[RMDB]
The record gives the reactivity of an RNA of 177 nucleotides to 2A3.
Reactivities are rounded to 0.1 and cut off at 0 and 3.
The data come from the RNA Mapping Database (RMDB), library RFM100.
RNA sequence: GGGAACGACUCGAGUAGAGUCGAAAACUGGUCUUGUCAUAGUGCUGACAUUUGUAGUUCCUUGACUUUCGUUCUCUGCCAGUGACGUGUCCAUUCGGCGCCAGCAGCCCACCCAUAGGUUGCAUAAUAUUUCUCGACACUUCGGUGUCGAGAAAUAAAAAGAAACAACAACAACAAC
Reactivity to 2A3 in 0.01 (KOAc 150mM, MgCl2 10mM, bicine 150mM(pH8.5), 24C), signal-to-noise 2, nucleotides 027 to 126: c020u020g010g160u040c040u140u150g070u010c010a140u080a150g040u020g070c030u000g010a060c050a110u020u050u120g110u070a140g020u080u040c000c000u010u030g010a010c000u080u140u060c000g030u040u020c030u000c020u070g060c010c050a190g000u030g060a050c060g030u070g110u100c050c010a020u110u170c180g070g020c010g000c000c000a000g030c000a000g020c000c030c000a020c000c030c000a040u070a020g000g060u020u010g000c000a010u150a170a000
Values cover nucleotides 27 to 126.